[RMDB]
Structure probing data (2A3 and DMS) for a 207-nucleotide construct. The reactions ran in a buffer of 150 mM KOAc, 10 mM MgCl2 and 150 mM bicine (pH 8.5), at 24 C. The DMS profile rests on 6,987 reads. The 2A3 profile rests on 3,430 reads.

RNA sequence: GGGAACGACUCGAGUAGAGUCGAAAAUGCGUGCGUGGCAGGCCAGCUGCAGGUGAGUGGUCUGAUGUACUGGCUGGAGCUGGCAGCUCCUCUCUGGGAGCAGUAGAAAGCAAGGUCAUCCUCUGAGAAUGAGAUGGGAAUUGUUCUCUAGGGGAGAUAAUAAUAUACGCUUCGGCGUAUAUUAUUAAAAAGAAACAACAACAACAAC
Reactivity to 2A3 in 0.01 (KOAc 150mM, MgCl2 10mM, bicine 150mM(pH8.5), 24C), signal-to-noise 3, nucleotides 027 to 156: u130g010c030g020u050g010c030g010u050g070g000c030a020g010g070c010c000a010g000c020u090g040c030a020g090g110u130g100a100g040u090g040g070u080c080u130g100a130u180g040u100a040c030u020g150g000c010u010g030g050a010g000c010u020g010g000c000a010g010c000u020c010c000u080c020u010c100u130g030g010g010a010g000c010a000g010u050a030g060a080a060a020g050c060a050a020g070g020u070c060a100u030c110c000u010c010u010g010a010g010a030a030u090g020a030g020a070u200g060g000g000a030a060u040u030g000u000u010c020u000c070u140a020g000g010g010g010a010g010a000
Reactivity to DMS in 0.01 (KOAc 150mM, MgCl2 10mM, bicine 150mM(pH8.5), 24C), signal-to-noise 3, nucleotides 027 to 156: u000g020c060g030u000g020c020g030u000g020g020c040a130g050g020c020c010a040g020c020u010g000c050a070g000g020u000g000a110g020u000g000g000u000c050u000g010a150u000g020u010a060c040u000g010g000c010u010g000g010a130g030c010u010g000g020c020a120g010c010u010c010c010u000c140u000c210u020g010g020g020a050g010c010a120g030u000a070g010a110a090a100g020c050a070a140g000g000u000c030a120u000c010c010u010c020u000g000a060g010a060a070u000g000a040g000a110u000g020g000g000a180a210u000u000g020u010u000c010u000c000u000a020g030g020g010g010a050g000a080